Source: RMDB library OK2TST, as collected in RNAgym. Structure probing data (DMS and 2A3) for a 177-nucleotide construct. The RNA was probed in 150 mM KOAc, 10 mM MgCl2 and 150 mM bicine (pH 8.5) at 24 C.

RNA sequence: GGGAACGACUCGAGUAGAGUCGAAAAUGCCAAAGUUAAGGACUCACCUGUGACAGCCUCAGGAGGUCCUGAGGACAUGUGCCCAAGGUGGUCAGGGCACAGCUUGGUUUUGUACAUUUUAGGGAGACUGUCUUCGAAAGUUCGCUUUCGAAGACAGAAAAGAAACAACAACAACAAC
Reactivity to DMS in 0.01 (KOAc 150mM, MgCl2 10mM, bicine 150mM(pH8.5), 24C), signal-to-noise 4, nucleotides 027 to 126: u000g000c300c010a030a050a050g000u000u010a100a070g010g010a040c020u000c040a060c020c000u010g000u010g010a130c110a050g000c040c030u000c000a010g010g020a300g010g010u000c000c000u000g010a030g010g010a120c080a080u000g010u010g000c020c010c010a070a110g010g030u000g010g010u010c040a170g000g010g010c030a020c030a030g000c060u000u000g020g010u000u000u010u010g010u000a060c050a050u000u000u000u000a120g000g010g000a110g010a190
Reactivity to 2A3 in 0.01 (KOAc 150mM, MgCl2 10mM, bicine 150mM(pH8.5), 24C), signal-to-noise 3, nucleotides 027 to 126: u140g000c020c000a100a000a000g060u120u080a080a050g040g010a020c010u030c150a230c020c020u010g010u030g090a060c060a080g100c030c000u030c000a020g040g010a100g100g180u160c020c000u010g000a000g010g010a020c040a150u080g000u010g020c020c010c030a050a080g080g080u090g000g050u030c030a030g010g000g000c050a010c010a030g000c010u040u050g030g000u100u060u000u100g040u040a050c000a180u050u070u090u230a050g030g030g000a040g030a060